The record gives the reactivity of an RNA of 177 nucleotides to 2A3 and DMS. For 2A3, 820 sequencing reads were counted. As a SHAPE reagent, 2A3 marks flexible, mostly unpaired nucleotides at the ribose 2'-OH. Source: RMDB library RFMREP, as collected in RNAgym.
RNA sequence: GGGAACGACUCGAGUAGAGUCGAAAAGAAUACUUCAUAGAGAGUUUCUCUCUGUGGGGAUGACGGCUGCGAUGCUGGGGUUGGCCCAAACCGCUGACAAGCGUCAGCCGACGAUUGGUAGAACAAACGGUAUACACUAGUUCGCUAGUGUAUACCGAAAAGAAACAACAACAACAAC
Reactivity to 2A3 in 0.01 (KOAc 150mM, MgCl2 10mM, bicine 150mM(pH8.5), 24C), signal-to-noise 1, nucleotides 027 to 126: g040a070a020u110a230c000u000u000c000a000u020a010g000a010g010a010g050u090u230u140c030u030c010u000c010u010g010u000g010g010g000g020a010u180g050a040c000g000g000c010u090g020c070g040a070u070g010c040u010g000g000g000g140u040u100g100g000c010c000c060a060a000a000c030c060g000c140u100g020a080c070a190a030g010c010g160u140c020a010g020c000c000g010a010c020g080a030u080u100g010g060u140a110g060a200a050c030a030a070a050
Reactivity to DMS in 0.01 (KOAc 150mM, MgCl2 10mM, bicine 150mM(pH8.5), 24C), signal-to-noise 2, nucleotides 027 to 126: g000a180a130u000a060c010u000u010c000a000u000a000g000a010g020a040g030u050u000u010c040u000c020u000c000u010g010u000g010g010g000g000a100u000g020a240c030g000g020c000u000g010c070g030a070u000g010c020u010g020g030g000g030u000u000g020g000c000c020c100a070a080a090c140c220g000c030u000g000a050c070a130a080g000c010g000u000c000a030g030c010c020g030a080c070g000a090u000u000g000g010u000a040g000a090a070c110a050a040a190
The RNA was probed in 150 mM KOAc, 10 mM MgCl2 and 150 mM bicine (pH 8.5) at 24 C.